This 177-nucleotide RNA was probed chemically with DMS and 2A3. As a SHAPE reagent, 2A3 marks flexible, mostly unpaired nucleotides at the ribose 2'-OH. It was measured as part of the RMDB library TTRDEL. The RNA was probed in 150 mM KOAc, 10 mM MgCl2 and 150 mM bicine (pH 8.5) at 24 C. For 2A3, 1,962 sequencing reads were counted.
RNA sequence: GGGAACGACUCGAGUAGAGUCGAAAAGAUAUGGAGAGCUUUGAUCUUGGGCUCGAAGAACUCGGAAACGAGGGAGAGCUUAAGGGAGCUCUCCUAAGUCAAAGCCUACGUCUUCGGACGUAGGCAAGUCUUUAAAAUCCUUCGGGAUUUUAAAGACAAAAGAAACAACAACAACAAC
Reactivity to DMS in 0.01 (KOAc 150mM, MgCl2 10mM, bicine 150mM(pH8.5), 24C), signal-to-noise 1, nucleotides 027 to 126: g000a050u000a300u010g000g010a030g000a000g010c000u000u010u010g000a040u030c000u000u000g040g000g000c020u010c000g020a110a110g000a080a170c020u020c000g000g020a160a090a210c010g010a060g010g000g010a060g010a000g000c010u000u000a050a050g020g010g000a020g010c000u000c000u000c000c000u000a010a090g000u000c020a150a150a180g000c000c010u000a000c020g000u000c010u000u000c260g000g000a020c010g010u000a000g000g000c030a000a000
Reactivity to 2A3 in 0.01 (KOAc 150mM, MgCl2 10mM, bicine 150mM(pH8.5), 24C), signal-to-noise 1, nucleotides 027 to 126: g020a010u060a090u170g020g000a030g000a000g000c040u210u300u180g070a070u230c000u000u020g000g010g000c020u010c000g150a080a020g000a000a030c000u000c020g000g070a100a080a040c030g000a010g000g010g020a040g010a000g020c000u000u030a000a000g060g020g000a010g020c010u000c000u020c010c000u020a070a000g000u020c020a160a000a000g000c000c000u000a000c000g000u020c010u020u070c240g110g010a000c020g010u050a000g000g000c000a000a000